[RMDB]
RNA sequence: GGGAACGACUCGAGUAGAGUCGAAAAUAGGUGGGAGGCUUUGAAACCAGGACGCCAGUUUUGGCGGAGCCAUCCUUGGGAUACCACCCUUGUAGUACUGGGACUCUAACCAUAGGCCAUGAAUCUGGUCUUGGGACACUGUCAGGUGGGCAGUUUAUAGUUUUAGUACGUUCGCGUACUAAAACUAAAAAGAAACAACAACAACAAC
Reactivity to DMS in 0.01 (KOAc 150mM, MgCl2 10mM, bicine 150mM(pH8.5), 24C), signal-to-noise 2, nucleotides 027 to 156: u000a060g000g050u040g000g010g030a150g020g010c010u000u000u000g010a230a200a150c000c010a090g000g050a100c010g010c060c080a120g020u010u000u040u000g000g000c000g030g010a060g010c000c030a070u000c040c030u000u010g000g030g010a160u000a050c040c040a110c020c010c060u010u000g010u000a100g010u000a050c050u000g000g020g010a080c030u010c030u000a100a250c010c000a060u020a040g030g000c010c010a040u000g010a110a190u000c230u000g020g020u000c000u020u000g010g000g000a120c090a050c020u000g030u010c050a080g000g030u000g020g010g010c040a040g010u010u030u000a100
Reactivity to 2A3 in 0.01 (KOAc 150mM, MgCl2 10mM, bicine 150mM(pH8.5), 24C), signal-to-noise 1, nucleotides 027 to 156: u130a010g030g010u040g020g000g030a020g000g000c000u060u130u110g070a090a060a080c010c000a010g010g070a000c000g010c040c000a070g040u110u110u140u110g020g000c000g000g000a000g030c000c030a050u020c040c030u000u070g060g000g010a020u050a090c010c020a030c000c020c000u000u140g060u050a100g010u000a040c030u000g000g070g000a040c010u020c020u070a020a050c010c020a140u120a090g010g000c010c010a010u110g120a130a150u120c050u010g000g000u010c000u010u000g000g010g000a000c010a000c040u050g010u070c010a030g000g160u030g020g050g030c000a000g000u050u120u110a120
Source: RMDB library OK3TST, as collected in RNAgym. An RNA of 207 nucleotides, treated with DMS and 2A3 and read out base by base. 2A3 adducts were read by reverse transcription with SuperScript II with manganese. For DMS, 3,241 sequencing reads were counted.